[RMDB]
RNA sequence: GGGAACGACUCGAGUAGAGUCGAAAAGACAAGUUUUAGAAGGAAACCAAGAACAAAUGACGAAUUAAUUGCACAAACAUUAACGACAACUCAAGGUAUUCCAAUUAAUAUUAGAGGGCAAAUUGACGCCUCUAAUAUUUUUCGAAAUAUUAGAGGCAAAAGAAACAACAACAACAAC
Reactivity to 2A3 in 0.01 (KOAc 150mM, MgCl2 10mM, bicine 150mM(pH8.5), 24C), signal-to-noise 8, nucleotides 027 to 126: g090a020c060a040a030g010u040u040u110u160a150g090a240a050g060g030a040a030a000c020c010a050a050g030a040a070c050a090a110a070u070g040a050c030g020a020a050u050u030a030a050u100u120g030c130a050c080a140a120a030c050a110u060u050a050a020c030g070a030c030a070a010c020u020c030a050a020g060g000u040a250u050u020c000c000a020a010u100u120a080a050u080a060u160u110a050g030a050g020g030g000c050a050a080a070u070u080g040a050c110
Reactivity to DMS in 0.01 (KOAc 150mM, MgCl2 10mM, bicine 150mM(pH8.5), 24C), signal-to-noise 5, nucleotides 027 to 126: g020a130c080a090a100g000u010u010u020u000a060g000a140a240g020g000a060a040a060c020c030a050a280g010a030a060c070a040a090a070u010g010a100c030g000a050a050u010u020a020a010u020u000g030c110a080c200a100a090a130c090a040u000u000a070a070c070g000a060c060a040a050c070u000c000a020a200g000g000u000a040u010u000c020c020a020a080u030u010a050a030u010a050u020u030a030g010a050g000g000g030c070a030a060a070u020u030g000a150c210